[RMDB]
RNA sequence: GGGAACGACUCGAGUAGAGUCGAAAAGAUAUGGACCAUCCCUAGGGUGAUGACCGUACUCGGAAACGAGUACGCAAGCCCGAAAGGGAGUGGUCCUAAGUCAAAACCGUUAAGUUCGCUUAACGGACAGUAUCUUUACGUUCGCGUAAAGAUACUGAAAAGAAACAACAACAACAAC
Reactivity to 2A3 in 0.01 (KOAc 150mM, MgCl2 10mM, bicine 150mM(pH8.5), 24C), signal-to-noise 7, nucleotides 027 to 126: g030a020u090a050u170g010g000a000c010c010a000u020c000c010c000u040a130g020g020g020u060g080a300u220g050a080c110c040g000u000a000c000u000c010g000g000a030a070a050c010g000a000g010u000a000c000g000c010a090a110g010c010c010c000g020a230a060a020g010g010g020a050g140u110g010g000u000c000c000u000a060a000g020u010c040a020a010a130a220c000c000g000u000u000a010a000g010u050u160c300g010c190u010u000a010a010c000g000g010a050
Reactivity to DMS in 0.01 (KOAc 150mM, MgCl2 10mM, bicine 150mM(pH8.5), 24C), signal-to-noise 9, nucleotides 027 to 126: g000a030u010a300u010g010g010a010c010c000a130u000c000c000c000u000a300g010g010g040u000g000a140u010g010a180c300c010g000u000a000c000u000c000g000g000a130a120a220c010g010a010g010u000a000c010g020c030a080a300g000c010c000c010g010a050a120a090g000g010g010a020g040u000g010g000u000c000c010u000a000a070g000u010c050a110a100a160a160c010c000g000u000u000a010a010g010u000u010c260g010c010u000u000a000a010c000g010g010a130